[RMDB]
RNA sequence: GGGAACGACUCGAGUAGAGUCGAAAAGAUAUGGAUCGAUUGUGGACAUGCUAUACCUUCGGAAACGAAGGGAUAGCAACAGCCAUGUCGAUCCUAAGUCAAACAGCUGUUGUUCGCAACAGCUGAAGCCCAAGUGGGUGUUCGCACCCACUUGGGCAAAAGAAACAACAACAACAAC
Reactivity to 2A3 in 0.01 (KOAc 150mM, MgCl2 10mM, bicine 150mM(pH8.5), 24C), signal-to-noise 1, nucleotides 027 to 126: g020a010u030a020u020g010g000a030u000c000g000a000u240u300g030u100g000g030a050c220a300u300g040c000u020a010u040a090c010c020u010u010c030g040g030a060a030a000c010g010a030a030g000g000g000a000u000a000g000c020a060a010c040a010g090c000c040a000u000g030u020c010g000a000u000c000c000u000a160a000g010u000c090a250a070a140c030a020g000c010u050g000u000u000g090u080u150c300g120c270a060a000c110a090g000c000u000g050a000a040